[RMDB]
RNA sequence: GGGAACGACUCGAGUAGAGUCGAAAACUUGACCAGUCUUCUCGCCUAUUUGCCACGAAUACUGCGUCGUCAGGAUACACCCAUAGGCUUGUUAUGUCUGGAUUUUAACUCCUUGUCUGGUAGCAAACCAUGCUCCUUGAUUCGUCAAGGAGCAUGGAAAAGAAACAACAACAACAAC
Reactivity to 2A3 in 0.01 (KOAc 150mM, MgCl2 10mM, bicine 150mM(pH8.5), 24C), signal-to-noise 2, nucleotides 027 to 126: c000u090u120g060a010c010c000a010g010u020c020u020u000c020u000c010g020c000c000u030a110u040u060u160g000c010c000a080c060g020a040a020u090a070c010u020g010c040g150u100c010g050u050c030a040g000g060a000u040a070c080a100c030c020c010a020u050a090g000g000c000u010u090g080u130u030a070u190g070u010c000u030g010g010a030u000u090u000u070a020a020c020u000c000c000u000u020g020u040c060u000g100g000u090a080g020c020a010a010a030
Reactivity to DMS in 0.01 (KOAc 150mM, MgCl2 10mM, bicine 150mM(pH8.5), 24C), signal-to-noise 3, nucleotides 027 to 126: c110u000u030g000a060c020c020a050g000u010c060u010u010c020u040c170g000c030c110u000a030u010u020u020g000c030c100a070c110g000a060a060u020a030c090u000g000c020g020u010c090g010u050c030a050g020g030a110u020a070c160a110c060c010c020a110u010a050g000g000c030u000u000g000u070u030a030u020g000u030c000u010g000g000a060u020u010u010u050a050a070c080u000c000c000u000u030g000u000c050u000g000g010u030a030g010c040a060a010a080